[RMDB]
RNA sequence: GGGAACGACUCGAGUAGAGUCGAAAAGAUAUGGAAGUGAGAUUCGUAUCCACUGGUCGGAAACGACCACUGGAAGAAUCCACUUCCUAAGUCAAACGUUGCCCUAUUGUUCGCAAUAGGGCAACGACAUGCAUUGAUGCUUCGGCAUCAAUGCAUGAAAAGAAACAACAACAACAAC
Reactivity to DMS in 0.01 (KOAc 150mM, MgCl2 10mM, bicine 150mM(pH8.5), 24C), signal-to-noise 1, nucleotides 027 to 126: g000a010u000a050u000g000g000a040a010g000u010g010a170g000a000u000u000c000g030u010a150u010c000c010a020c160u000g000g010u010c000g010g000a020a010a030c000g000a010c020c000a000c080u000g010g030a010a050g000a010a000u000c010c010a010c000u000u000c010c000u000a000a080g000u000c010a140a130a300c020g030u000u000g000c010c000c000u000a010u000u010g000u000u020c250g010c010a020a010u000a000g010g000g010c000a000a000c000g000a130
Reactivity to 2A3 in 0.01 (KOAc 150mM, MgCl2 10mM, bicine 150mM(pH8.5), 24C), signal-to-noise 2, nucleotides 027 to 126: g000a000u010a000u050g000g030a000a000g010u020g020a260g020a140u030u040c090g120u300a200u030c000c000a010c020u000g010g010u020c020g020g000a010a040a020c000g010a020c000c000a000c010u000g000g070a300a300g010a050a080u010c000c000a000c010u010u000c000c000u000a000a000g000u000c000a020a060a130c010g010u000u000g000c020c000c000u000a000u000u050g090u000u140c300g000c220a000a000u000a000g000g000g000c000a010a000c010g000a020